[RMDB]
RNA sequence: GGGAACGACUCGAGUAGAGUCGAAAAGAAGUGGAUUGCAGAUGCUAGAUUUGGAGAGAUGCAGUUUGUGCAAAGGACGGUCUUGAAAAGGCCGUCGAAAUGUGUCUGCCAAGGCUAAAAUAAUCACAUUUUGUAUUUGCACAGCAUUUUCAUUGUACCAUCCUGACUGGUUCGCCAGUCAGGAUGGAAAAGAAACAACAACAACAAC
Reactivity to 2A3 in 0.01 (KOAc 150mM, MgCl2 10mM, bicine 150mM(pH8.5), 24C), signal-to-noise 1, nucleotides 027 to 156: g090a100a040g010u070g020g090a050u110u070g010c000a030g020a050u020g120c050u030a050g020a140u080u090u100g070g050a060g000a010g000a030u020g060c040a040g060u160u190u080g020u000g000c000a010a030a020g020g000a020c000g020g010u000c000u020u180g050a170a060a010a000g000g000c000c000g000u000c000g020a000a000a000u000g010u000g020u040c060u050g020c010c020a070a030g070g060c060u040a000a030a080a210u140a010a130u100c020a000c010a000u020u010u010u070g100u040a060u010u010u020g070c020a020c010a010g000c000a030u030u000u110u000c060a060u000u090g010u050a080